An RNA of 177 nucleotides, treated with DMS and 2A3 and read out base by base. 2A3 adducts were read by reverse transcription with SuperScript II with manganese. The data come from the RNA Mapping Database (RMDB), library M2PK50.
RNA sequence: GGGAACGACUCGAGUAGAGUCGAAAAUAGGUCGUGUUCGCACGACCUAAGAUAAAAUGCAUAAAAUGCCAGUAACCCGAUACACAAGGGAGUGCACCUGGCCUACGAUGUCGUUCGCGACAUCGAAUCAUAAAAGUCACUUCGGUGACUUUUAUGAAAAAGAAACAACAACAACAAC
Reactivity to DMS in 0.01 (KOAc 150mM, MgCl2 10mM, bicine 150mM(pH8.5), 24C), signal-to-noise 6, nucleotides 027 to 126: u000a000g000g010u000c000g060u000g020u000u020c220g040c000a000c010g000a010c000c000u000a000a020g010a130u000a050a070a070a110u000g010c040a090u010a080a060a090a130u010g000c000c010a020g000u010a120a130c000c010c010g000a140u010a140c200a100c250a120a140g000g000g010a150g020u000g000c040a110c270c010u000g000g020c030c300u000a080c020g000a010u000g010u000c000g010u000u000c200g020c010g000a020c000a000u010c010g000a080a100
Reactivity to 2A3 in 0.01 (KOAc 150mM, MgCl2 10mM, bicine 150mM(pH8.5), 24C), signal-to-noise 5, nucleotides 027 to 126: u060a000g000g000u000c000g000u010g030u050u060c220g000c080a000c000g010a000c000c000u000a000a000g000a000u100a010a110a030a030u120g010c030a010u150a240a250a090a050u150g000c000c000a000g020u050a140a120c000c000c010g020a050u110a270c070a010c030a120a050g020g000g010a050g040u060g010c020a020c030c000u000g010g000c000c010u040a060c020g010a010u000g000u010c010g030u020u060c220g010c000g080a010c000a000u000c010g000a010a050